[RMDB]
RNA sequence: GGGAACGACUCGAGUAGAGUCGAAAAGGAUGCAGCGUUUUGCCUUCAAUCAGGCCGAUAUCGAGCUCGUAAUCGACCAGCUUUUGGCACACUUGCGCUGAGUUGGAAAUAAACAGGCUUUGUGACGGCGCCAUAUAAUCUUCGGAUUAUAUGGCGCAAAAGAAACAACAACAACAAC
Reactivity to 2A3 in 0.01 (KOAc 150mM, MgCl2 10mM, bicine 150mM(pH8.5), 24C), signal-to-noise 3, nucleotides 027 to 126: g080g010a020u060g060c040a010g000c040g080u060u080u150u130g010c010c000u090u030c030a130a140u120c050a010g000g020c020c040g020a070u050a020u210c020g020a010g010c100u050c110g100u080a110a110u060c010g040a040c000c010a000g020c020u000u060u170u050g020g000c030a040c030a060c130u100u160g000c070g020c030u020g010a020g010u000u010g020g090a050a070a060u230a040a110a020c030a020g010g000c000u050u090u110g050u010g030a060c020g020
Reactivity to DMS in 0.01 (KOAc 150mM, MgCl2 10mM, bicine 150mM(pH8.5), 24C), signal-to-noise 2, nucleotides 027 to 126: g000g010a080u000g000c010a070g050c150g000u000u000u000u040g050c010c040u040u000c060a120a090u020c120a170g020g010c020c000g000a130u010a050u020c040g020a100g020c150u000c080g050u000a010a190u000c080g030a060c000c000a000g000c090u000u000u000u000g060g000c000a090c300a140c100u030u000g000c170g010c000u010g000a060g000u000u000g000g030a010a040a020u000a050a190a060c070a000g010g000c060u030u000u000g000u010g000a070c040g000